[RMDB]
RNA sequence: GGGAACGACUCGAGUAGAGUCGAAAAGAUAUGGAACCAUGAGGAGGCUGCGUUGAUCCAUAUACUUCGCUCGGAAACGAGCGAAGUAUAUGGGGAGCAGACCUCUACCCACCAUGGUUCCUAAGUCCUAAUCUCUUCACUUCGGUGAAGAGAUUAGAAAAGAAACAACAACAACAAC
Reactivity to DMS in 0.01 (KOAc 150mM, MgCl2 10mM, bicine 150mM(pH8.5), 24C), signal-to-noise 1, nucleotides 027 to 126: g030a090u010a230u020g000g020a000a000c000c000a000u020g000a210g000g010a020g000g010c000u000g000c000g000u020u030g010a010u010c000c000a010u000a010u000a020c000u000u010c000g050c000u000c000g030g000a140a160a230c000g000a010g020c000g010a010a010g020u000a010u000a000u000g000g000g000g000a000g010c000a000g020a050c000c000u000c000u010a000c070c060c090a300c160c010a020u000g010g020u000u000c000c000u000a020a070g000u010c060

The record gives the reactivity of an RNA of 177 nucleotides to DMS. For DMS, 1,507 sequencing reads were counted. It was measured as part of the RMDB library TTRINS. Values cover nucleotides 27 to 126.